[RMDB]
RNA sequence: GGGAACGACUCGAGUAGAGUCGAAAAACGCUACCUUUCGAGGUAGCGUCACCUACUUCGCGCAACCGUCGACUCGUUCCCAUGGUUGCGUGAAGUAGUUUGAGUGGCAGACGUUCGCGUCUGCCAACGACGGGGGAAUGUUCGCAUUCCCCCGUCGAAAAGAAACAACAACAACAAC
Reactivity to DMS in 0.01 (KOAc 150mM, MgCl2 10mM, bicine 150mM(pH8.5), 24C), signal-to-noise 1, nucleotides 027 to 126: a010c010g000c000u010a000c010c000u000u010u030c190g000a020g060g020u000a000g040c000g000u000c050a050c300c000u000a000c000u000u000c030g030c020g000c010a020a000c000c020g010u010c300g010a090c160u000c010g000u010u010c000c000c010a040u020g000g000u000u000g020c000g020u000g000a000a000g000u000a010g000u000u030u000g000a190g010u010g000g020c070a000g000a000c000g000u010u020c240g000c000g020u000c000u000g010c000c000a000a030
Conditions: 150 mM KOAc, 10 mM MgCl2 and 150 mM bicine (pH 8.5), 24 C. The record gives the reactivity of an RNA of 177 nucleotides to DMS. For DMS the reverse transcriptase was MarathonRT. Source: RMDB library M2PK50, as collected in RNAgym.